The record gives the reactivity of an RNA of 177 nucleotides to 2A3 and DMS.
RNA sequence: GGGAACGACUCGAGUAGAGUCGAAAAAAGAAAAACGUCUUACAGCCAGUGUCUAAACUCCAAACAACGGAAUGUAUCAAUGAGACCUUGUAUAUGGAUACACGUGCAUUUAAAACCGCCCUGCCGGGACUAUUUCAAUCUUCGGAUUGAAAUAGUCAAAAGAAACAACAACAACAAC
Reactivity to 2A3 in 0.01 (KOAc 150mM, MgCl2 10mM, bicine 150mM(pH8.5), 24C), signal-to-noise 1, nucleotides 027 to 126: a030a000g120a020a050a000a010a000c070g040u040c000u010u050a070c080a010g020c040c020a040g030u040g010u070c010u090a170a040a000c000u000c010c000a070a080a110c010a020a050c080g000g050a090a060u140g000u050a060u050c090a120a020u130g040a030g010a110c000c030u070u060g080u030a060u040a040u210g080g000a040u050a080c000a000c030g040u070g040c070a050u150u070u060a080a090a000a050c040c000g000c010c000c010u030g010c060c000g070g110
Reactivity to DMS in 0.01 (KOAc 150mM, MgCl2 10mM, bicine 150mM(pH8.5), 24C), signal-to-noise 1, nucleotides 027 to 126: a090a040g000a080a050a030a110a170c130g000u010c000u000u000a110c110a100g020c100c030a070g010u000g000u010c050u010a060a060a060c090u000c020c060a040a000a060c220a050a090c050g010g000a060a080u020g010u000a110u010c080a060a030u010g000a080g000a150c040c040u000u000g000u000a070u020a110u000g000g000a060u000a050c040a040c040g020u000g010c040a020u000u000u030a030a010a020a110c050c070g010c040c040c040u000g000c130c030g010g000
Description
It was measured as part of the RMDB library RFMREP. The RNA was probed in 150 mM KOAc, 10 mM MgCl2 and 150 mM bicine (pH 8.5) at 24 C.